[RMDB]
RNA sequence: GGGAACGACUCGAGUAGAGUCGAAAAUCAAUGGACUUCGGUCCAUUGAAAAAGUCAAUAAAGCUAGUGCUGACCUGAAUGACAACAGCACAAAGAAAAGAAAAAUCGUGCACUUCGGUGCACGAAACAGAAUUAAUACCUUCGGGUAUUAAUUCUGAAAAGAAACAACAACAACAAC
Reactivity to 2A3 in 0.01 (KOAc 150mM, MgCl2 10mM, bicine 150mM(pH8.5), 24C), signal-to-noise 3, nucleotides 027 to 126: u030c000a000a020u000g000g000a000c010u020u090c300g120g000u000c010c010a000u000u000g000a000a000a010a000a000g040u020c060a100a300u060a150a070a010g110c080u120a100g030u010g000c010u010g030a090c010c020u120g170a280a120u090g010a020c010a080a000c000a040g000c060a010c000a010a040a010g020a030a060a020a030g120a000a080a010a010a040u040c010g000u000g000c010a010c020u010u060c220g100g030u010g000c010a000c000g000a000a000a000
Reactivity to DMS in 0.01 (KOAc 150mM, MgCl2 10mM, bicine 150mM(pH8.5), 24C), signal-to-noise 2, nucleotides 027 to 126: u000c000a000a000u010g000g000a000c000u000u010c200g030g020u000c000c000a020u010u000g010a000a060a080a100a150g000u000c050a030a140u010a010a070a030g000c100u000a130g030u000g000c000u000g000a200c060c010u000g010a040a120u000g000a050c020a070a280c010a000g000c000a000c010a080a100a080g010a060a070a120a170g000a030a030a060a110a100u000c000g020u010g010c000a000c000u000u030c210g010g020u000g000c010a010c000g010a000a070a080